[RMDB]
RNA sequence: GGGAACGACUCGAGUAGAGUCGAAAAGUCUGGUUAGCUCUAGUUCUUAGAGGAUCAAAGUAGAGGAGUAUGUGCUGAUUAAAAGGUGGCAGCUUCUUGAUUAUCAUUGGUUCUUGCUGAGGAAUGUCUAUUUAUAGUUGUUCGCAACUAUAAAUAGAAAAGAAACAACAACAACAAC
Reactivity to 2A3 in 0.01 (KOAc 150mM, MgCl2 10mM, bicine 150mM(pH8.5), 24C), signal-to-noise 3, nucleotides 027 to 126: g010u020c030u070g060g050u110u090a040g010c030u000c030u070a050g040u080u000c030u050u080a030g010a010g010g020a010u010c020a020a020a070g020u030a030g020a020g010g010a010g000u020a020u020g020u010g000c010u010g020a130u180u280a060a060a030a030g010g020u010g010g030c000a010g030c000u000u010c000u020u030g040a090u040u100a050u060c040a010u000u040g030g000u030u010c010u040u100g020c020u050g050a030g020g050a100a050u100g040u000
Reactivity to DMS in 0.01 (KOAc 150mM, MgCl2 10mM, bicine 150mM(pH8.5), 24C), signal-to-noise 3, nucleotides 027 to 126: g000u010c030u000g000g000u000u000a120g020c060u010c030u010a080g010u000u000c030u000u000a070g020a040g010g010a010u000c020a020a030a110g030u000a140g010a030g010g020a020g000u000a010u000g000u000g000c010u000g000a120u000u030a100a130a130a270g000g000u000g000g000c020a030g000c010u010u000c010u000u000g000a120u010u010a050u000c040a080u000u000g000g010u000u000c020u000u000g010c080u000g010a060g010g000a050a050u000g010u000
Background: Source: RMDB library RFMREP, as collected in RNAgym. The record gives the reactivity of an RNA of 177 nucleotides to 2A3 and DMS. The RNA was probed in 150 mM KOAc, 10 mM MgCl2 and 150 mM bicine (pH 8.5) at 24 C. DMS adducts were read by reverse transcription with MarathonRT. For DMS, 3,896 sequencing reads were counted. 2A3 adducts were read by reverse transcription with SuperScript II with manganese. Values cover nucleotides 27 to 126.